Chemical mapping of a 207-nucleotide RNA with 2A3. Values cover nucleotides 27 to 156.
RNA sequence: GGGAACGACUCGAGUAGAGUCGAAAAGGAAAUCAGGAAGGUCAAACCAAAUCAAGCUGGCGUGGAUUCCCCCACCUGAGGGAUGAAGCGCGAGAUCUAAUUCAGGUUAGCCAUUCGUUAGCGUGUCGGUUCGCAGGCGGUGGUGAAAUUAAAGAUCCUACGUCUACUUCUUCGGAAGUAGACGUAGAAAAGAAACAACAACAACAAC
Reactivity to 2A3 in 0.01 (KOAc 150mM, MgCl2 10mM, bicine 150mM(pH8.5), 24C), signal-to-noise 2, nucleotides 027 to 156: g020g000a000a050a000u050c010a010g030g010a020a000g010g000u070c020a040a060a080c030c040a100a100a070u100c050a030a000g060c030u050g040g000c000g000u030g000g000a010u000u000c010c000c000c010c000a070c000c060u040g050a080g020g000g000a000u020g000a010a000g020c020g000c050g000a000g020a000u140c100u130a070a050u170u010c060a030g030g000u030u020a010g000c020c020a100u190u210c140g030u050u080a090g000c000g000u080g120u110c100g120g040u140u080c010g020c030a010g030g040c010g000g050u020g000g000u040g000a050a120a080u180u210a080a110a000g020a010u030c000

Source: RMDB library ARCHII, as collected in RNAgym. The reactions ran in a buffer of 150 mM KOAc, 10 mM MgCl2 and 150 mM bicine (pH 8.5), at 24 C.